Source information:
The data come from the RNA Mapping Database (RMDB), library RNAMAK. This 207-nucleotide RNA was probed chemically with 2A3. Reactivities are given for positions 27 through 156. 2A3 adducts were read by reverse transcription with SuperScript II with manganese. Reactivities are rounded to 0.1 and cut off at 0 and 3. The RNA was probed in 150 mM KOAc, 10 mM MgCl2 and 150 mM bicine (pH 8.5) at 24 C.
[RMDB]
RNA sequence: GGGAACGACUCGAGUAGAGUCGAAAACUCUACCCUUCGGGGUAGAGAAAAAGAUAUGGACCUACAGAGCUUUUGACGGAAGUUCGUAGUCGGAAACGACUACCUUCCGAUAAGCUCGUAGGUCCUAAGUCAAAAAACACGGAGUUCGCUCCGUGAAUCGACUAAUCAAGUUCGCUUGAUUAGUCGAAAAAGAAACAACAACAACAAC
Reactivity to 2A3 in 0.01 (KOAc 150mM, MgCl2 10mM, bicine 150mM(pH8.5), 24C), signal-to-noise 2, nucleotides 027 to 156: c000u010c000u000a000c000c000c000u030u050c210g040g000g000g000u000a000g000a000g010a070a000a000a000a000g040a020u070a040u100g000g000a000c000c000u000a000c120a130g040a040g030c040u080u260u300u280g180a090c090g000g000a000a000g010u110u300c030g000u040a000g000u010c010g000g000a070a110a010c010g000a000c000u000a000c000c000u000u010c000c000g000a040u030a010a000g000c000u010c000g000u000a010g000g000u000c020c000u000a000a000g000u000c000a000a000a000a000a090a140c010a000c010g000g020a010g020u120u090c160g070c100u010c030c000g020u010g000a000a070